Annotation:
The record gives the reactivity of an RNA of 207 nucleotides to 2A3. Conditions: 150 mM KOAc, 10 mM MgCl2 and 150 mM bicine (pH 8.5), 24 C. The 2A3 profile rests on 1,111 reads.
[RMDB]
RNA sequence: GGGAACGACUCGAGUAGAGUCGAAAACGAUCUGAGUGCAGAUCGAGCCACGAUGACGUGGCAAACCACGCUAGGGUGGCGAAGCGUGGACAAUAACAAAUAAAAUCGCAUCAAGGACGGCGAUGAUGCGACGCCACCCAAAGAAAACGCCGUCCAAGCCACAUACGUACUUCGGUACGUAUGUGGCAAAAGAAACAACAACAACAAC
Reactivity to 2A3 in 0.01 (KOAc 150mM, MgCl2 10mM, bicine 150mM(pH8.5), 24C), signal-to-noise 2, nucleotides 027 to 156: c010g000a000u000c000u000g040a060g250u220g140c020a000g010a010u000c000g010a010g000c000c000a000c000g160a220u300g100a060c080g030u010g010g000c000a000a000a000c000c000a000c020g000c000u000a000g020g010g000u000g000g000c000g020a030a000g010c000g000u000g020g010a010c010a000a020u190a060a070c070a020a010a000u180a050a060a020a070u100c010g020c000a000u000c020a110a040g020g000a000c020g010g000c000g070a070u030g000a000u000g010c000g010a010c060g020c000c000a000c000c000c000a000a110a000g020a040a030a000a000c010g020c000c000g000u000c000c000a040a000